Overview
An RNA of 177 nucleotides, treated with DMS and 2A3 and read out base by base. The RNA was probed in 150 mM KOAc, 10 mM MgCl2 and 150 mM bicine (pH 8.5) at 24 C. For 2A3, 15,902 sequencing reads were counted.
RNA sequence: GGGAACGACUCGAGUAGAGUCGAAAACACUGCGGGGGAGACUGGAUAUCCUGGUGUAGCGGUGGGAUGCGCACAUGUCGGGAGGCACACUGGUGGCGAGGGCGGGCAUCUGCGCAGUGACUGGCGCGAUUAUUUUAUAUUUCGAUAUAAAAUAAUCAAAAGAAACAACAACAACAAC
Reactivity to DMS in 0.01 (KOAc 150mM, MgCl2 10mM, bicine 150mM(pH8.5), 24C), signal-to-noise 7, nucleotides 027 to 126: c060a100c090u010g010c040g010g010g000g010g010a080g000a070c080u000g000g010a140u030a070u020c030c010u010g020g010u010g000u020a090g010c090g000g010u010g000g010g010a110u010g010c040g010c030a080c130a070u020g020u000c040g000g000g000a090g000g000c070a050c080a090c090u010g000g010u010g000g000c080g000a100g000g000g010c110g000g010g010c090a040u010c060u000g010c010g000c010a020g010u010g000a090c100u020g000g000c060g020c090
Reactivity to 2A3 in 0.01 (KOAc 150mM, MgCl2 10mM, bicine 150mM(pH8.5), 24C), signal-to-noise 4, nucleotides 027 to 126: c070a020c050u070g010c040g020g020g020g020g010a050g030a060c030u020g040g030a060u060a060u140c000c020u040g020g010u060g010u050a040g020c030g010g050u080g030g020g010a030u060g010c020g010c010a020c010a040u060g020u040c020g000g000g010a030g010g020c020a010c000a010c030u050g020g010u030g020g000c050g030a090g010g000g020c040g010g000g000c000a030u000c020u040g000c000g000c000a010g010u010g030a040c030u030g010g020c020g000c010